Chemical mapping of a 177-nucleotide RNA with 2A3. For 2A3 the reverse transcriptase was SuperScript II with manganese. Reactivities are rounded to 0.1 and cut off at 0 and 3. Reactivities are given for positions 27 through 126.

RNA sequence: GGGAACGACUCGAGUAGAGUCGAAAAACAGAGUUCUUUAUGUCCAGAAAACUUCAUCGCUAUAUAGAUUCUAUGGAUGAGCAUUCUGAGGCUGUCCAAGAUUUCCUCGAUUUUUUUAAGGGUGGAGGCCUCUGUGCAUGUUCGCAUGCACAGAGGCAAAAGAAACAACAACAACAAC
Reactivity to 2A3 in 0.01 (KOAc 150mM, MgCl2 10mM, bicine 150mM(pH8.5), 24C), signal-to-noise 2, nucleotides 027 to 126: a000c170a000g220a000g100u060u000c000u000u000u020a110u160g010u080c020c000a030g000a040a190a000a000c000u160u030c020a000u000c000g010c230u050a050u000a000u000a210g090a250u200u120c010u050a300u010g000g000a020u010g160a030g020c000a030u150u010c030u030g140a120g030g140c000u000g050u000c000c000a000a140g000a110u020u000u040c010c070u020c000g160a170u030u000u080u150u070u030u260a000a080g020g000g000u090g000g000a020g040
The RNA was probed in 150 mM KOAc, 10 mM MgCl2 and 150 mM bicine (pH 8.5) at 24 C.